[RMDB]
RNA sequence: GGGAACGACUCGAGUAGAGUCGAAAAUCACCAGAUGCUGCAUCACCUGAUCACUGAUGGCUCAACGGUAUCCGGCGGUACAACUGAAUACUUGUAGCUGCCUUUUGAGCGGGUUGGCUGCAAUCCUAAAAGAGGACACACUUCGGUGUGUCCUCAAGUUAUACGUCCCGUUCGCGGGACGUAUAACAAAAGAAACAACAACAACAAC
Reactivity to 2A3 in 0.01 (KOAc 150mM, MgCl2 10mM, bicine 150mM(pH8.5), 24C), signal-to-noise 2, nucleotides 027 to 156: u080c000a010c030c000a020g000a050u050g010c030u020g000c020a020u040c010a040c010c000u030g010a050u030c020a010c060u010g010a030u050g060g000c030u030c090a050a020c010g040g020u020a020u020c030c010g050g000c020g040g040u090a100c060a100a050c100u140g040a090a030u080a090c070u030u070g030u050a000g010c010u010g010c000c000u010u070u000u080g010a010g010c040g010g020g000u170u300g030g020c000u000g010c000a010a070u080c030c010u090a090a070a030a030g010a000g000g010a000c000a010c000a000c010u030u090c130g050g000u000g000u010g020u030c000c000u010c010a000a000
Chemical mapping of a 207-nucleotide RNA with 2A3. For 2A3 the reverse transcriptase was SuperScript II with manganese. The data come from the RNA Mapping Database (RMDB), library M2RFPK.